[RMDB]
RNA sequence: GGGAACGACUCGAGUAGAGUCGAAAAUAUUUAGAUAUCUGUCAUCAAUUAGAAAUACUAGAAUUAGUUCAGAAGCUAAAUCAGGAACAAGGUUGUACAAUUGUCAUGGUUCUUCAUGAUAUCAACCCACGUAGUUCACCUUCGGGUGAACUACGUGAAAAGAAACAACAACAACAAC
Reactivity to 2A3 in 0.01 (KOAc 150mM, MgCl2 10mM, bicine 150mM(pH8.5), 24C), signal-to-noise 2, nucleotides 027 to 126: u110a020u000u010u020a020g000a030u090a120u040c010u030g100u000c000a090u030c080a130a170u180u040a050g030a160a090a040u230a080c120u040a020g120a150a180u160u000a060g110u010u000c000a030g000a050a020g090c040u020a030a070a090u040c100a140g050g000a090a000c050a080a140g030g000u020u080g010u090a020c100a120a270u180u040g000u000c000a030u000g140g000u180u300c070u030u130c000a000u000g030a000u050a000u080c000a000a000c000c040
Reactivity to DMS in 0.01 (KOAc 150mM, MgCl2 10mM, bicine 150mM(pH8.5), 24C), signal-to-noise 1, nucleotides 027 to 126: u050a000u010u010u010a050g000a020u070a050u040c000u000g070u000c000a090u010c070a030a000u000u020a000g000a090a190a070u040a120c130u000a040g010a100a210u030u000a000g040u030u000c050a040g030a000a010g000c040u000a000a000a000u000c120a100g000g020a060a080c250a130a100g000g000u010u010g000u000a070c210a080a180u000u060g000u000c060a000u000g000g000u000u080c020u030u020c000a030u000g000a000u000a010u000c000a000a000c000c000